[RMDB]
RNA sequence: GGGAACGACUCGAGUAGAGUCGAAAAGUUAUGCUCUCGCUGCCUAAUGGCGGUGCGGGACACCCACUCUAAAGUCCUUAGGGUUAGCCCCUUAAGGCGGGGUUCGGAGGCACCUGGCAACAGAAGCUGAAACUGUGCACAUUCGUGUGCACAGUAAUGGAAGAUGUGGAUUCGUCCACAUCUUCCAAAAAGAAACAACAACAACAAC
Reactivity to 2A3 in 0.01 (KOAc 150mM, MgCl2 10mM, bicine 150mM(pH8.5), 24C), signal-to-noise 1, nucleotides 027 to 156: g140u150u080a130u240g020c010u050c000u020c010g010c000u070g000c000c010u260a300a140u300g030g000c020g120g130u080g000c000g000g040g010a010c010a040c000c000c000a000c000u080c040u130a040a000a300g300u040c000c000u000u000a010g000g000g000u010u090a090g010c000c000c000c000u010u060a000a000g000g000c000g040g000g000g030u180u280c110g100g040a050g000g000c010a040c000c000u060g280g000c000a000a000c000a000g000a000a000g000c000u000g050a050a000a010c030u000g000u000g000c000a000c000a040u000u110c300g120u040g000u010g010c000a000c000a000g000u040a000a080
This 207-nucleotide RNA was probed chemically with 2A3. It was measured as part of the RMDB library M2RFPK. Conditions: 150 mM KOAc, 10 mM MgCl2 and 150 mM bicine (pH 8.5), 24 C.